An RNA of 177 nucleotides, treated with DMS and 2A3 and read out base by base. For DMS, 12,368 sequencing reads were counted. The data come from the RNA Mapping Database (RMDB), library OK2TRN.

RNA sequence: GGGAACGACUCGAGUAGAGUCGAAAACAGGCACUGUACCGUGAGCUUGAUGAGGAAGUGGGUCUGGCAGAAGAAGAUGUCACGGUGCUGCAUCAAACUUCUGAGUGGCUUCAUUAUCGCCUGCCUCCUCAUUAACCCUUUUCGAAGGGUUAAUGAGAAAAGAAACAACAACAACAAC
Reactivity to DMS in 0.01 (KOAc 150mM, MgCl2 10mM, bicine 150mM(pH8.5), 24C), signal-to-noise 8, nucleotides 027 to 126: c060a070g010g010c030a160c100u000g010u010a060c080c050g020u000g000a090g010c080u000u010g010a100u010g010a100g000g000a050a050g030u000g000g010g010u000c070u010g020g020c030a030g000a040a020g000a170a300g000a030u000g010u000c060a050c040g010g020u010g010c100u000g000c030a020u000c040a040a110a160c020u000u000c010u000g010a110g010u000g010g020c050u010u000c070a050u000u010a080u010c130g000c020c010u000g010c040c030u000c060
Reactivity to 2A3 in 0.01 (KOAc 150mM, MgCl2 10mM, bicine 150mM(pH8.5), 24C), signal-to-noise 7, nucleotides 027 to 126: c020a010g040g000c020a020c100u070g050u130a090c010c060g060u060g030a020g040c050u120u110g060a060u060g020a100g070g040a070a060g020u080g010g050g030u030c060u080g080g000c030a010g000a050a010g020a050a010g010a030u060g090u150c020a010c100g090g090u080g020c080u040g010c000a010u020c020a050a230a140c000u020u010c010u020g050a070g060u050g060g000c010u070u060c060a060u040u190a080u190c070g010c010c010u010g040c010c010u030c010
Conditions: 150 mM KOAc, 10 mM MgCl2 and 150 mM bicine (pH 8.5), 24 C.